Chemical mapping of a 177-nucleotide RNA with 2A3 and DMS.
For 2A3, 5,380 sequencing reads were counted.
It was measured as part of the RMDB library OK2TRN.
The RNA was probed in 150 mM KOAc, 10 mM MgCl2 and 150 mM bicine (pH 8.5) at 24 C.
2A3 adducts were read by reverse transcription with SuperScript II with manganese.

RNA sequence: GGGAACGACUCGAGUAGAGUCGAAAAUCGUGCCUGUACAUCUCAACAACUUGUAUAACAGUUGCCACCACAUCAAUAUACAAUCGAUUGGCCGAAGUGAACUCAAGAUUAGUGAGCAAAGUGAAAAGAUAUUGUCAAACUUCGGUUUGACAAUAUCAAAAGAAACAACAACAACAAC
Reactivity to 2A3 in 0.01 (KOAc 150mM, MgCl2 10mM, bicine 150mM(pH8.5), 24C), signal-to-noise 4, nucleotides 027 to 126: u070c010g010u060g030c000c010u020g020u060a030c020a090u040c040u020c060a050a080c020a020a050c050u070u070g040u070a130u030a120a080c050a040g020u050u030g020c020c010a030c000c000a050c020a070u050c020a090a020u070a020u040a180c070a030a070u070c070g090a060u050u060g050g000c010c000g020a060a020g060u030g100a050a020c010u000c050a010a020g030a170u080u120a040g050u020g060a020g000c040a050a070a040g080u130g090a070a040a030a060
Reactivity to DMS in 0.01 (KOAc 150mM, MgCl2 10mM, bicine 150mM(pH8.5), 24C), signal-to-noise 5, nucleotides 027 to 126: u000c080g000u000g010c020c010u000g000u010a060c080a070u000c030u000c020a100a140c120a060a080c090u000u010g010u010a050u010a070a120c140a060g000u000u010g000c040c020a050c050c040a040c060a030u000c050a070a070u000a060u010a070c100a040a050u000c080g000a140u010u000g010g020c040c030g010a060a070g000u010g000a070a090c040u000c040a060a090g010a080u000u010a080g020u000g000a090g000c060a020a070a100g010u000g000a070a060a090a110